This 207-nucleotide RNA was probed chemically with 2A3.
The data come from the RNA Mapping Database (RMDB), library M2RFPK.
For 2A3 the reverse transcriptase was SuperScript II with manganese.
Conditions: 150 mM KOAc, 10 mM MgCl2 and 150 mM bicine (pH 8.5), 24 C.
For 2A3, 782 sequencing reads were counted.
[RMDB]
RNA sequence: GGGAACGACUCGAGUAGAGUCGAAAAAAAAUCUAGUGCAAAUAUUGUCUUAAUUACUUAGGCUAAAAGAAAUAAGUAUUAAAGCGGGACAAGGCAUCGCCAUUUGAUACAAAUAUUGAUCAAUGGAACAAGAAACACUACUUCGGUAGUGUUUCAAACUACAUUUCCGAUUCGUCGGAAAUGUAGUAAAAGAAACAACAACAACAAC
Reactivity to 2A3 in 0.01 (KOAc 150mM, MgCl2 10mM, bicine 150mM(pH8.5), 24C), signal-to-noise 1, nucleotides 027 to 156: a040a000a000a060u060c070u080a080g000u000g040c020a000a220a130u080a080u240u000g000u000c000u040u110a140a090u200u010a050c010u020u020a010g000g150c010u100a180a120a050a000g050a000a100a030u060a100a040g020u010a030u060u150a130a150a000g090c100g020g000g000a000c000a020a010g020g010c000a030u030c090g020c020c010a010u000u060u190g060a060u190a040c080a010a150a070u170a110u100u160g020a020u000c000a000a010u000g000g010a080a020c090a080a060g000a000a000a000c010a000c000u000a000c010u040u000c120g070g000u000a000g000u000g010u010u000u000c000a000a000